RNA sequence: GGGAACGACUCGAGUAGAGUCGAAAAGUGGCAUACUUCGGUAUGCCACAAACCAGAGCCUAUCUGGAACACGCUCUACUGCGUGAUCCCAAGUAGAUCCCAAAAGUCGUGGGUUCGCCCACGACAACACACUGCAAGUCUUCGGACUUGCAGUGUGAAAAGAAACAACAACAACAAC
Reactivity to DMS in 0.01 (KOAc 150mM, MgCl2 10mM, bicine 150mM(pH8.5), 24C), signal-to-noise 2, nucleotides 027 to 126: g000u000g000g000c000a020u000a000c010u010u010c170g050g000u000a000u000g010c000c020a000c020a000a050a050c020c020a040g010a070g010c260c140u040a100u000c010u010g000g010a110a190c040a110c040g010c010u020c080u010a020c060u000g010c030g000u000g000a100u010c010c010c010a040a070g030u010a100g020a160u000c010c010c010a060a100a070a130g010u000c000g010u000g040g010g010u000u010c250g020c000c010c010a000c000g000a020c000a060a080
Reactivity to 2A3 in 0.01 (KOAc 150mM, MgCl2 10mM, bicine 150mM(pH8.5), 24C), signal-to-noise 2, nucleotides 027 to 126: g000u000g000g000c010a000u000a000c010u010u050c180g100g000u000a000u000g000c000c000a000c000a000a000a000c000c000a010g000a010g040c030c150u160a160u090c010u000g030g000a060a030c050a010c020g020c000u050c020u090a060c030u050g070c010g040u010g050a100u040c020c020c000a030a010g030u020a020g030a090u050c030c020c000a010a110a080a070g000u010c000g000u000g040g020g000u040u020c190g100c000c000c010a000c000g000a000c010a010a000